[RMDB]
RNA sequence: GGGAACGACUCGAGUAGAGUCGAAAAGUGAGGGCAAGGUGCUGUAUUCUCCACUGGCAGCGGAUCAGUGAGUUUACUGCCAGACCGAAGGACUGUUUUUAGCGAAGCUUGAAGUCCGCUUCGCUGAAGCACAGACUGGUAUUUACUUAAACAAUACUCGUUGUUAAAGGUUCGCCUUUAACAACGAAAAAGAAACAACAACAACAAC
Reactivity to 2A3 in 0.01 (KOAc 150mM, MgCl2 10mM, bicine 150mM(pH8.5), 24C), signal-to-noise 4, nucleotides 027 to 156: g070u050g010a020g010g040g000c060a050a040g080g010u070g040c030u050g000u050a070u050u000c020u040c040c020a040c020u010g010g000c020a060g080c110g080g050a120u050c020a030g030u020g070a000g010u040u050u030a030c020u020g020c030c000a030g030a070c000c030g050a050a030g030g030a030c000u010g010u010u110u000u000u010a000g000c000g010a000a010g000c020u100u130g100a160a050g160u120c090c070g000c010u000u000c000g000c010u000g000a010a000g010c070a010c000a020g060a040c030u050g010g010u060a090u020u100u060a030c030u060u150a080a090a020c050a040a090u120a110c030
Reactivity to DMS in 0.01 (KOAc 150mM, MgCl2 10mM, bicine 150mM(pH8.5), 24C), signal-to-noise 2, nucleotides 027 to 156: g060u000g020a080g020g030g020c040a070a130g040g050u000g010c030u010g020u000a080u000u010c030u000c040c000a130c020u010g020g020c000a170g030c050g040g000a060u010c030a150g020u000g020a270g030u000u000u000a030c030u000g020c010c020a110g040a100c050c060g000a100a120g000g020a080c020u000g030u010u010u000u000u000a020g000c030g030a060a020g020c010u010u010g020a110a110g010u000c190c180g000c020u000u000c000g000c020u000g020a010a040g020c030a080c060a080g000a120c050u000g040g000u000a070u010u000u010a120c060u000u000a090a040a100c070a030a090u000a060c080
An RNA of 207 nucleotides, treated with 2A3 and DMS and read out base by base. The DMS profile rests on 3,373 reads. The 2A3 profile rests on 2,697 reads. DMS (dimethyl sulfate) methylates the pairing face of unpaired adenines and cytosines. 2A3 adducts were read by reverse transcription with SuperScript II with manganese. The RNA was probed in 150 mM KOAc, 10 mM MgCl2 and 150 mM bicine (pH 8.5) at 24 C. DMS adducts were read by reverse transcription with MarathonRT.